[RMDB]
RNA sequence: GGGAACGACUCGAGUAGAGUCGAAAAGGAAACAGAAGAAUGGUUCAACUUCUAUAUGAAAUGGCAUGCCGAUUACAAAAUUAUGAUAUCAUCAAAUGGAUAGGAUUUAACCUGCAUGUUUAUAACUUGGAAGCCAUUUUUAGCAUUGCUUUUGUUAACCCCUAGCGUAUUUCGAUACGCUAGGGGUAAAAGAAACAACAACAACAAC
Reactivity to 2A3 in 0.01 (KOAc 150mM, MgCl2 10mM, bicine 150mM(pH8.5), 24C), signal-to-noise 1, nucleotides 027 to 156: g070g000a060a080a000c010a050g160a060a000g000a060a000u040g000g040u080u120c030a100a090c030u010u000c000u000a150u020a020u300g040a080a090a000u010g000g000c000a000u000g000c000c070g070a080u130u060a110c080a040a080a000a030u150u200a120u180g060a010u030a020u060c060a000u000c000a000a200a040u220g110g000a010u000a090g000g070a010u000u000u200a010a010c040c000u020g000c060a000u010g040u000u080u070a000u020a060a120c040u020u070g010g010a020a020g000c020c000a020u070u000u000u000u050a060g030c030a010u040u110g020c040u050u060u080u050g070u090u140a070